Conditions: 150 mM KOAc, 10 mM MgCl2 and 150 mM bicine (pH 8.5), 24 C. Structure probing data (2A3 and DMS) for a 177-nucleotide construct. For 2A3 the reverse transcriptase was SuperScript II with manganese. Source: RMDB library M2PK90, as collected in RNAgym.

RNA sequence: GGGAACGACUCGAGUAGAGUCGAAAAACAAAGCAUGGCUAGAAGAUGCCACCGCGGAUAGAGCUGAGGUACUCUAGACUUCUAGCCAGAAGUAUUCCCAAACCGCGGAGAGUGCUCUCGCAAAAAAACCUAGUAUGACGUUCGCGUCAUACUAGGUAAAAGAAACAACAACAACAAC
Reactivity to 2A3 in 0.01 (KOAc 150mM, MgCl2 10mM, bicine 150mM(pH8.5), 24C), signal-to-noise 1, nucleotides 027 to 126: a000c010a000a060a000g170c030a090u010g000g000c000u000a010g000a020a050g050a140u200g060c090c040a030c010c020g000c010g010g000a060u180a140g180a020g060c170u130g040a020g000g060u010a020c010u010c000u010a100g040a240c000u010u000c000u000a000g020c020c010a000g000a050a000g000u000a070u040u050c000c000c010a060a070a030c000c000g000c020g000g000a010g010a010g020u030g010c040u000c000u020c100g090c030a050a160a000a000a000a000
Reactivity to DMS in 0.01 (KOAc 150mM, MgCl2 10mM, bicine 150mM(pH8.5), 24C), signal-to-noise 1, nucleotides 027 to 126: a060c200a120a160a110g020c060a200u000g030g010c000u000a010g000a010a020g000a180u020g000c130c060a080c020c050g000c000g020g000a220u030a010g000a010g000c030u010g000a120g000g000u010a100c000u000c000u010a090g000a150c000u000u000c020u000a020g000c000c030a000g000a020a160g000u010a160u000u000c000c000c000a060a100a180c080c010g000c000g030g000a050g000a130g000u000g000c030u000c070u000c040g020c170a000a000a030a030a010a010
The 2A3 profile rests on 1,383 reads.